RNA sequence: GGGAACGACUCGAGUAGAGUCGAAAAGCAGUUCCGAAGGGGUCACUGCGAACACUUGCCUACCGGUCGGGCCAGGCUUGUGGAUUGGACGUUCUACAUCCGGUCGGGCCUGUAGUUCGUCCGAAAAGGCAACGAGCAGCUUCGGCUGUUCGUUGCCAAAAGAAACAACAACAACAAC
Reactivity to DMS in 0.01 (KOAc 150mM, MgCl2 10mM, bicine 150mM(pH8.5), 24C), signal-to-noise 1, nucleotides 027 to 126: g050c000a000g010u000u090c000c000g000a150a060g070g010g000g000u000c120a020c000u000g010c050g000a180a230c070a120c040u010u000g000c030c020u000a180c090c000g000g000u010c050g000g000g030c010c090a070g000g050c060u100u090g000u000g000g000a120u050u020g020g000a080c060g000u000u040c120u000a000c050a090u010c110c040g050g020u010c140g000g000g000c090c270u070g010u000a000g000u000u010c110g000u000c010c000g000a040a060a090a060
Reactivity to 2A3 in 0.01 (KOAc 150mM, MgCl2 10mM, bicine 150mM(pH8.5), 24C), signal-to-noise 2, nucleotides 027 to 126: g010c000a010g010u000u050c020c020g030a160a120g050g040g000g040u180c040a000c020u000g010c000g020a130a010c030a000c030u050u060g030c000c000u040a040c030c020g170g040u160c070g040g000g000c000c010a010g000g010c000u070u060g020u020g060g080a050u010u120g010g010a000c070g040u070u000c030u000a030c020a020u070c000c040g200g140u120c020g100g010g020c020c010u000g000u000a020g000u010u000c010g000u000c000c000g010a010a030a020a060
About this RNA: The record gives the reactivity of an RNA of 177 nucleotides to DMS and 2A3. 2A3 adducts were read by reverse transcription with SuperScript II with manganese. The 2A3 profile rests on 1,755 reads. For DMS, 1,364 sequencing reads were counted.